The record gives the reactivity of an RNA of 207 nucleotides to 2A3. The reactions ran in a buffer of 150 mM KOAc, 10 mM MgCl2 and 150 mM bicine (pH 8.5), at 24 C.
RNA sequence: GGGAACGACUCGAGUAGAGUCGAAAAGCUAGGCCGGGGGGUUGGGCGUCCCCUGUAACCCGAAAUCGCCCUUAUGCGGGGGCCGAAAACUUGGGGGCGGCAUGUCCUCCAGUCCUUCCUUCCCAGACUCCUCGAUGAGGUCUCGUCCCGUGGGGCUGUAAUUCUUAACGUUCGCGUUAAGAAUUACAAAAGAAACAACAACAACAAC
Reactivity to 2A3 in 0.01 (KOAc 150mM, MgCl2 10mM, bicine 150mM(pH8.5), 24C), signal-to-noise 1, nucleotides 027 to 156: g020c030u040a040g010g000c020c010g010g000g010g010g000g000u010u010g020g010g000c000g000u000c000c000c020c000u010g010u030a000a020c010c010c020g000a010a020a080u280c010g000c030c010c000u020u120a130u060g000c000g000g000g000g000g000c000c010g000a000a000a000a000c010u020u020g020g000g010g000g020c040g020g140c160a140u300g010u040c010c000u000c010c000a000g020u050c010c000u020u070c020c010u020u040c060c020c000a010g000a020c010u010c000c000u010c030g040a070u070g100a040g110g010u000c020u020c040g020u040c000c010c010g030u110g000g020g000g000c000u010